[RMDB]
RNA sequence: GGGAACGACUCGAGUAGAGUCGAAAAGGUCCGCUGUUCGCAGCGGACCAAAUAAAAUCAGCGGUAUCGAGGCGUAAAAUAUUACGGCUGAACGCCUCGAUAAAACCGUGCCGUUCGCGGCACGGAACCCAUCUUUUACGUUCGCGUAAAAGAUGGGAAAAGAAACAACAACAACAAC
Reactivity to DMS in 0.01 (KOAc 150mM, MgCl2 10mM, bicine 150mM(pH8.5), 24C), signal-to-noise 1, nucleotides 027 to 126: g030g010u000c010c000g060c000u010g010u010u000c190g050c000a020g040c010g000g020a000c010c000a010a010a050u000a030a060a080a100u010c060a110g000c160g030g000u010a000u000c000g010a010g000g010c000g000u000a040a090a100a130u010a100u000u000a130c130g000g000c120u010g020a090a040c010g010c020c000u010c010g000a000u000a010a060a070a170c010c000g010u000g020c010c010g000u020u000c140g020c000g000g000c000a010c010g010g000a020a030
Reactivity to 2A3 in 0.01 (KOAc 150mM, MgCl2 10mM, bicine 150mM(pH8.5), 24C), signal-to-noise 2, nucleotides 027 to 126: g020g010u000c000c000g040c010u000g020u050u060c270g000c050a000g020c000g000g020a000c000c000a000a010a000u010a000a010a000a020u090c050a010g050c040g190g020u030a010u010c000g010a000g010g030c010g020u010a020a040a050a050u260a100u160u150a060c060g110g000c070u080g030a020a000c000g000c000c000u000c000g000a000u000a000a010a000a020c010c000g000u000g000c010c020g010u010u040c300g000c000g050g010c000a000c020g000g010a000a000
Background:
Chemical mapping of a 177-nucleotide RNA with DMS and 2A3. 2A3 adducts were read by reverse transcription with SuperScript II with manganese. It was measured as part of the RMDB library M2PK50. Conditions: 150 mM KOAc, 10 mM MgCl2 and 150 mM bicine (pH 8.5), 24 C. High DMS reactivity at an A or C suggests that its Watson-Crick edge is free.